RNA sequence: GGGAACGACUCGAGUAGAGUCGAAAAGUGACCUGUUCGCUGCAGGGAAGCGUGCCGAGAACGCCGGGUCCGCUCGUGGAUGACCCCGGCAAAAGAAUAAGUGCUAAAUCUAACCGCACUGAGUUCGCUCUCGCUGCCUGAUUUUUAGUCAGGAUUACGCUAUUAUUACCUUCGGGUAAUAAUAGCGAAAAGAAACAACAACAACAAC
Reactivity to 2A3 in 0.01 (KOAc 150mM, MgCl2 10mM, bicine 150mM(pH8.5), 24C), signal-to-noise 4, nucleotides 027 to 156: g060u050g050a090c010c000u030g010u060u130c130g020c130u190g020c000a020g000g010g070a020a020g050c050g030u080g040c090c070g010a020g000a060a020c070g000c000c010g010g000g000u020c010c020g050c010u070c040g230u210g190g000a050u160g030a040c010c010c100c030g000g000c000a050a020a010a000g020a020a030u040a040a010g000u010g000c020u050a090a150a210u120c080u130a070a120c100c060g010c000a000c000u020g010a040g150u000u020c000g010c030u010c010u010c020g020c040u050g030c000c010u010g010a040u020u050u080u130u220a040g020u000c000a000g010g020a020u080u120a020
Reactivity to DMS in 0.01 (KOAc 150mM, MgCl2 10mM, bicine 150mM(pH8.5), 24C), signal-to-noise 3, nucleotides 027 to 156: g000u000g020a170c010c030u010g010u000u020c130g030c060u000g010c030a060g000g050g010a090a120g010c040g010u000g060c090c010g000a050g010a100a080c040g000c000c020g010g010g000u000c020c010g010c130u000c090g020u000g030g010a200u010g000a180c150c020c000c010g040g030c010a040a020a040a130g000a050a090u000a090a040g010u000g000c000u000a100a070a120u000c100u010a160a200c110c170g030c020a030c000u010g010a070g020u000u000c010g000c050u000c020u000c020g050c080u010g010c000c000u000g000a010u000u010u010u000u000a130g020u000c010a040g000g010a180u010u000a170